[RMDB]
RNA sequence: GGGAACGACUCGAGUAGAGUCGAAAAUCCUAAGUCGUCCUGACAUGUACAUAGAGAGAGCGUUGAAAUACUCGGAAACGAGUAUGGAGCUCUUGGAUGUACAACAGCAGGACGAUAUGGAAAAACAACCGGAUUUGGUUCGCCAAAUCCGGUUGAACCAUCAAAAUCUGUUCGCAGAUUUUGAUGGAAAAGAAACAACAACAACAAC
Reactivity to DMS in 0.01 (KOAc 150mM, MgCl2 10mM, bicine 150mM(pH8.5), 24C), signal-to-noise 1, nucleotides 027 to 156: u000c000c000u000a030a290g010u000c000g010u020c000c000u000g000a100c020a300u000g000u010a010c000a020u010a160g010a300g000a010g030a000g020c000g000u000u000g020a270a110a030u000a010c000u000c000g030g000a280a190a160c000g020a040g010u000a000u010g000g010a300g010c010u000c010u010u000g000g010a040u000g010u010a000c000a010a070c060a150g030c030a000g020g000a040c000g020a020u000a050u000g000g000a100a080a110a150a250c030a030a010c000c000g010g000a030u000u000u000g010g020u000u000c300g010c000c000a030a020a000u000c010c000g040g000u000u000g010a020a180
Reactivity to 2A3 in 0.01 (KOAc 150mM, MgCl2 10mM, bicine 150mM(pH8.5), 24C), signal-to-noise 2, nucleotides 027 to 156: u040c000c000u010a080a030g040u000c000g000u010c010c010u050g020a160c020a050u050g010u010a010c000a010u060a080g300a030g010a000g000a000g240c010g090u140u040g000a040a000a000u000a010c000u000c000g000g020a080a060a050c010g000a000g000u000a010u000g010g000a010g000c000u000c000u000u010g000g000a000u010g000u000a000c010a020a000c050a060g070c000a000g010g000a000c010g000a000u000a010u020g000g000a010a050a020a020a020c010a010a000c000c000g000g000a000u000u000u010g030g020u040u060c190g030c080c000a000a000a000u030c000c020g010g000u000u000g000a000a010